[RMDB]
RNA sequence: GGGAACGACUCGAGUAGAGUCGAAAAGAGCCGCUUCUCCACUGUCGCGCUACCAGCCAUUGCGGGUCCUCCGUGGCUUGCGGUGCCAAGGUGCCAAUAGGGUGUCGCUACCGGUCAUUGUGAUACCGCACACGUAAAUUUUCGAAUUUACGUGUGCAAAAGAAACAACAACAACAAC
Reactivity to DMS in 0.01 (KOAc 150mM, MgCl2 10mM, bicine 150mM(pH8.5), 24C), signal-to-noise 3, nucleotides 027 to 126: g000a080g020c010c020g020c060u000u000c020u010c020c030a090c080u010g000u010c080g020c080g010c030u010a070c080c040a090g020c120c040a080u000u010g020c040g010g050g000u000c090c030u010c090c170g010u000g010g020c030u000u010g000c010g000g010u000g000c020c040a080a130g020g000u000g030c030c060a070a100u010a100g000g010g000u000g010u000c040g000c040u000a080c040c040g020g010u000c070a130u000u010g020u010g010a120u010a050c100c070
Reactivity to 2A3 in 0.01 (KOAc 150mM, MgCl2 10mM, bicine 150mM(pH8.5), 24C), signal-to-noise 2, nucleotides 027 to 126: g030a010g080c010c020g000c030u050u010c000u000c010c020a040c050u070g010u070c040g000c010g020c010u040a070c010c020a010g050c010c010a070u030u130g030c050g020g010g050u060c000c010u080c040c100g030u160g000g010c000u010u060g010c010g010g010u000g000c000c000a090a050g040g000u030g020c000c010a080a060u140a130g090g060g000u020g030u010c020g000c060u050a050c020c030g030g070u060c030a060u050u140g060u020g030a050u040a080c030c020